[RMDB]
RNA sequence: GGGAACGACUCGAGUAGAGUCGAAAAGCACCAGUGAGGGUGGGACCGUCAAGAUAAAGGACACCGUGGUUGACUACUCAAGCACUCACUACUCAUGAUACUGGUUGAUUCGGAAGUGUAUUGCGGCCUCUCAGGAGAAAUUCGUUUCUCCUGAGAGAAAAGAAACAACAACAACAAC
Reactivity to DMS in 0.01 (KOAc 150mM, MgCl2 10mM, bicine 150mM(pH8.5), 24C), signal-to-noise 4, nucleotides 027 to 126: g030c070a060c010c010a060g020u010g010a050g020g010g040u010g000g000g000a080c050c100g000u000c090a050a060g000a120u040a070a160a120g000g000a090c050a040c070c080g000u010g000g030u010u000g000a070c130u030a100c150u000c080a060a090g000c040a080c020u020c030a070c030u010a080c030u000c030a090u050g000a190u010a040c020u010g000g010u010u010g010a080u020u010c090g000g020a100a120g010u010g000u030a040u010u010g010c040g000g000c250
Reactivity to 2A3 in 0.01 (KOAc 150mM, MgCl2 10mM, bicine 150mM(pH8.5), 24C), signal-to-noise 6, nucleotides 027 to 126: g050c050a030c010c020a010g040u030g070a040g020g020g000u040g000g020g060a070c070c030g010u060c040a070a030g060a150u190a190a110a030g070g000a040c020a020c050c060g040u070g000g070u040u060g020a060c040u080a060c010u130c090a060a010g030c010a010c040u040c010a050c030u130a160c000u020c010a050u110g090a080u090a150c010u020g010g020u040u090g050a110u140u020c030g010g050a050a080g070u020g010u080a100u070u130g070c030g040g000c000